[RMDB]
Annotation
Chemical mapping of a 207-nucleotide RNA with 2A3.
RNA sequence: GGGAACGACUCGAGUAGAGUCGAAAAGUCGGAACAUAACGACGGCGGGCCGGUGGGGAAACAGGGGGCUACCGUGGGAUAGCGAUGAGACAGCCCCUCCGAUGGCACCAAGCGUCGGAUCGCGGAAAACACUGUAAGCCCUUCGGGGCUUACAGAAUCUAUCUUCUUUGUUCGCAAAGAAGAUAGAAAAAGAAACAACAACAACAAC
Reactivity to 2A3 in 0.01 (KOAc 150mM, MgCl2 10mM, bicine 150mM(pH8.5), 24C), signal-to-noise 1, nucleotides 027 to 156: g010u000c000g070g010a220a170c110a300u190a140a000c040g010a000c000g050g000c080g010g000g000c110c070g030g050u090g020g000g000g030a040a150a000c010a160g000g020g010g020g040c030u060a090c070c090g030u070g050g050g000a070u070a030g000c020g000a010u040g000a020g020a040c030a010g050c000c000c000c000u030c000c010g010a030u070g130g000c030a050c050c020a030a030g030c000g010u050c000g020g010a020u020c020g000c080g110g020a020a040a090a040c090a020c010u020g000u000a000a010g000c000c000c000u010u030c110g010g000g030g030c000u010u000a030c000a010g000a010a000
It was measured as part of the RMDB library M2RFPK. For 2A3, 805 sequencing reads were counted.